[RMDB]
RNA sequence: GGGAACGACUCGAGUAGAGUCGAAAAGAUAUGGAUCUCUCCUGUCCCAUAGCUGAUGACCUCCGUAACAUCUUCUCGGAAACGAGAAGUGGGAGCAAGGCUUAAGGACAGGAGAGAUCCUAAGUCACUUUUCCUUUAACUUCGGUUAAAGGAAAAGAAAAGAAACAACAACAACAAC
Reactivity to DMS in 0.01 (KOAc 150mM, MgCl2 10mM, bicine 150mM(pH8.5), 24C), signal-to-noise 4, nucleotides 027 to 126: g000a060u000a300u020g010g020a010u000c000u000c000u000c000c000u000g010u000c000c000c030a240u010a010g000c000u010g020a090u000g000a100c300c000u000c000c000g010u020a060a160c180a010u000c000u000u000c000u000c000g010g000a180a120a210c010g010a000g020a010a030g030u000g010g000g000a010g000c030a070a130g010g020c000u000u010a300a140g000g020a010c000a010g000g020a000g010a000g000a000u000c000c000u000a010a070g000u010c060a170